Annotation: This 207-nucleotide RNA was probed chemically with 2A3 and DMS. The DMS profile rests on 2,133 reads. The 2A3 profile rests on 1,272 reads. Source: RMDB library OK3TST, as collected in RNAgym. Reactivities are given for positions 27 through 156. Conditions: 150 mM KOAc, 10 mM MgCl2 and 150 mM bicine (pH 8.5), 24 C.
RNA sequence: GGGAACGACUCGAGUAGAGUCGAAAAGACGAUAAGAUAGCUGAAGCCGCUAUCGCGGGCAUCAAGAAGCUAACCAGCCCGCCAUUCAAUGGCCGUGAUCUUAUUGUGCCUGGAACGCUCGAUGUUAGGCAGCUAAACGUGACUGAGCGGCUGGCCGUCACCUGUAUUCGUUCGCGAAUACAGGUGAAAAAGAAACAACAACAACAAC
Reactivity to 2A3 in 0.01 (KOAc 150mM, MgCl2 10mM, bicine 150mM(pH8.5), 24C), signal-to-noise 3, nucleotides 027 to 156: g030a000c010g010a010u020a050a020g000a010u020a010g060c070u110g100a120a030g020c010c020g000c090u060a030u100c030g000c020g000g000g030c020a020u030c070a140a190g150a140a030g100c040u090a090a070c010c020a000g000c000c010c010g000c020c000a020u130u140c060a060a130u140g000g000c010c040g030u080g010a020u020c010u030u030a020u000u020g040u090g040c000c010u020g030g060a180a040c020g000c030u000c040g040a050u120g020u070u030a040g010g070c040a010g010c040u130a120a080a040c030g030u030g020a060c040u100g040a020g040c000g020g000c020u030g030g040c010c000g010
Reactivity to DMS in 0.01 (KOAc 150mM, MgCl2 10mM, bicine 150mM(pH8.5), 24C), signal-to-noise 1, nucleotides 027 to 156: g020a140c020g020a000u000a070a030g000a040u000a090g000c010u010g010a110a080g010c050c020g050c050u000a050u000c100g000c030g070g030g030c000a080u030c130a040a170g010a090a130g000c140u000a110a070c060c060a240g000c010c010c010g000c010c070a020u010u000c050a060a060u000g010g070c000c030g030u010g010a060u000c030u020u010a040u000u000g050u000g000c050c070u000g000g020a060a080c060g000c050u000c030g030a130u000g010u010u000a060g010g040c090a050g000c020u000a060a150a080c080g010u010g020a090c060u010g000a060g020c000g020g040c010u000g010g020c010c020g010